[RMDB]
RNA sequence: GGGAACGACUCGAGUAGAGUCGAAAAAGCGAUCGUCAUGCGCCAGCUGGCCUGUCAUGCGCUACAUGAUCGUGCGCAGCGCCUAUACGACAGCGAUCGGUACGGAUCCGGCCAGACAUAUGGUACGAUCAACAGCGAUUUUCGAAUCGCUGUUGAUAAAAGAAACAACAACAACAAC
Reactivity to 2A3 in 0.01 (KOAc 150mM, MgCl2 10mM, bicine 150mM(pH8.5), 24C), signal-to-noise 2, nucleotides 027 to 126: a000g050c010g020a020u040c000g070u050c050a060u150g070c060g000c060c010a010g000c030u020g050g000c000c010u040g050u110c010a080u110g050c040g000c040u080a040c020a080u180g030a040u110c070g010u040g000c100g000c000a040g020c020g000c030c000u170a150u060a150c060g030a020c020a010g080c060g120a130u030c030g000g030u020a030c030g050g020a050u040c040c010g010g000c020c000a030g030a140c030a020u230a080u120g050g020u090a050c000g020
Reactivity to DMS in 0.01 (KOAc 150mM, MgCl2 10mM, bicine 150mM(pH8.5), 24C), signal-to-noise 4, nucleotides 027 to 126: a130g000c040g020a010u000c000g010u000c090a130u010g000c110g050c030c030a090g010c020u010g010g000c020c010u000g020u010c060a050u000g010c030g020c120u010a050c070a110u010g010a040u000c090g030u000g010c070g000c040a070g000c070g030c080c110u010a130u000a090c060g010a080c050a170g010c050g010a050u000c020g010g000u010a070c130g010g000a050u010c050c190g010g010c000c000a030g000a080c160a100u000a070u010g020g020u000a060c090g010